[RMDB]
Annotation
Structure probing data (DMS and 2A3) for a 177-nucleotide construct. 2A3 is a SHAPE reagent: it acylates the 2'-hydroxyl of flexible nucleotides of all four kinds. The RNA was probed in 150 mM KOAc, 10 mM MgCl2 and 150 mM bicine (pH 8.5) at 24 C. 2A3 adducts were read by reverse transcription with SuperScript II with manganese. For 2A3, 22,113 sequencing reads were counted. Reactivities are given for positions 27 through 126. The data come from the RNA Mapping Database (RMDB), library OK1LIB.
RNA sequence: GGGAACGACUCGAGUAGAGUCGAAAAGAGUAAAUAGAGGAGUCAGGGUUCGCACCCGCUCCGCGAACCUAGGGUAACACUGACUAUAGAGCGGAAGAGAGAGCAGACGAAGAUACGUCUGCAUAGAACCUAUAGCUAGGUUCGCCUAGCUAUAGGUAAAAGAAACAACAACAACAAC
Reactivity to DMS in 0.01 (KOAc 150mM, MgCl2 10mM, bicine 150mM(pH8.5), 24C), signal-to-noise 9, nucleotides 027 to 126: g010a090g010u020a030a070a090u030a080g000a100g000g010a040g010u000c070a110g000g000g000u000u010c040g020c030a090c080c010c010g010c020u010c010c150g000c010g000a020a020c010c010u000a250g010g010g010u010a060a080c150a220c070u010g010a110c080u010a100u020a060g010a030g010c010g010g010a160a070g010a080g000a120g010a110g000c010a000g000a010c000g010a150a130g010a180u030a080c020g010u000c000u010g010c010a010u010a030g010a120
Reactivity to 2A3 in 0.01 (KOAc 150mM, MgCl2 10mM, bicine 150mM(pH8.5), 24C), signal-to-noise 9, nucleotides 027 to 126: g080a000g050u180a030a080a130u210a060g090a070g160g030a030g040u050c050a060g020g010g010u020u010c000g000c000a080c020c010c010g010c020u020c010c010g000c000g000a010a010c000c020u070a060g080g070g020u060a060a020c040a020c100u030g020a000c010u040a030u100a190g010a000g010c020g010g030a130a010g080a010g010a010g010a010g010c000a000g000a010c010g040a110a030g060a180u140a130c010g010u000c000u000g000c000a000u010a010g030a010